[RMDB]
RNA sequence: GGGAACGACUCGAGUAGAGUCGAAAAAGGUGGGAAUUUUUCUGAUUUGUAAAGCAAUGUCACGCCAAAGACAAGCAAUUCCUUACUGGUUAAAACAUAUAGAAAAGAAUUAUCCUGCUUCAUUACAUCUUACUUCAGGCUUCGGCCUGAAGUAAGAAAAAGAAACAACAACAACAAC
Reactivity to DMS in 0.01 (KOAc 150mM, MgCl2 10mM, bicine 150mM(pH8.5), 24C), signal-to-noise 1, nucleotides 027 to 126: a000g000g040u010g000g000g000a040a050u040u030u010u000u000c000u010g000a240u000u000u000g000u000a000a050a010g000c000a090a110u050g000u010c000a200c270g000c160c260a000a230a040g000a120c010a030a240g000c090a120a040u010u010c000c000u090u060a140c100u060g000g000u000u040a100a000a050a110c040a180u010a080u000a000g000a000a000a060a000g000a020a140u000u000a060u000c000c000u030g000c000u000u000c140a070u040u010a040c150a080
Reactivity to 2A3 in 0.01 (KOAc 150mM, MgCl2 10mM, bicine 150mM(pH8.5), 24C), signal-to-noise 3, nucleotides 027 to 126: a010g020g010u030g020g070g110a230a250u000u000u100u020u010c060u050g060a090u150u080u080g100u070a060a060a020g000c030a120a210u100g000u010c010a010c090g050c000c000a100a080a000g030a010c030a020a020g010c000a040a140u060u060c000c010u060u160a140c070u100g000g060u010u020a020a080a060a000c020a010u130a000u040a030g120a030a060a000a000g030a020a030u080u020a010u050c000c000u020g010c000u070u040c020a100u000u130a050c040a110

The record gives the reactivity of an RNA of 177 nucleotides to DMS and 2A3. For 2A3, 1,237 sequencing reads were counted. The DMS profile rests on 1,124 reads. The reactions ran in a buffer of 150 mM KOAc, 10 mM MgCl2 and 150 mM bicine (pH 8.5), at 24 C. Values cover nucleotides 27 to 126. 2A3 adducts were read by reverse transcription with SuperScript II with manganese.